An RNA of 170 nucleotides, treated with DMS and 2A3 and read out base by base.
For 2A3 the reverse transcriptase was SuperScript II with manganese.
The DMS profile rests on 14,064 reads.

RNA sequence: GGGAACGACUCGAGUAGAGUCGAAAAAUAUUGCGCAGGUUGUCAUAGCUGACACCUUACAGGAAACUCCUGUUGUGCCUGAUACUGUUGAAGUCCCACCGCAAGUGGUGAAACUUCCGUCUGCACCUAACGCUGCAGUUCGCUGCAGCGAAAAGAAACAACAACAACAAC
Reactivity to DMS in 0.01 (KOAc 150mM, MgCl2 10mM, bicine 150mM(pH8.5), 24C), signal-to-noise 4, nucleotides 027 to 129: a000u040a040u070u020g020c090g000c030a040g030g010u040u040g020u060c020a010u030a230g050c260u000g000a000c030a020c060c010u040u000a060c020a000g030g010a160a150a140c140u040c020c020u000g030u000u000g030u000g040c000c000u000g030a000u060a110c120u040g030u030u010g060a020a000g000u000c010c100c000a030c070c000g000c200a070a190g010u000g020g040u060g020a100a060a010c070u000u000c080c060g000u030c030u010g050c000a000c000c090u090a050a090
Reactivity to 2A3 in 0.01 (KOAc 150mM, MgCl2 10mM, bicine 150mM(pH8.5), 24C), signal-to-noise 4, nucleotides 027 to 129: a000u180a040u080u070g040c050g000c000a010g000g010u090u120g020u000c030a050u160a100g050c100u010g010a000c000a010c000c000u030u080a010c010a000g020g050a140a080a040c040u030c030c000u040g030u090u040g030u010g020c010c020u010g030a040u060a150c030u070g100u150u060g000a000a000g050u050c000c000c000a000c000c030g090c130a180a040g020u040g040g000u100g000a070a000a010c010u000u010c020c010g020u000c000u010g000c000a000c000c000u060a050a040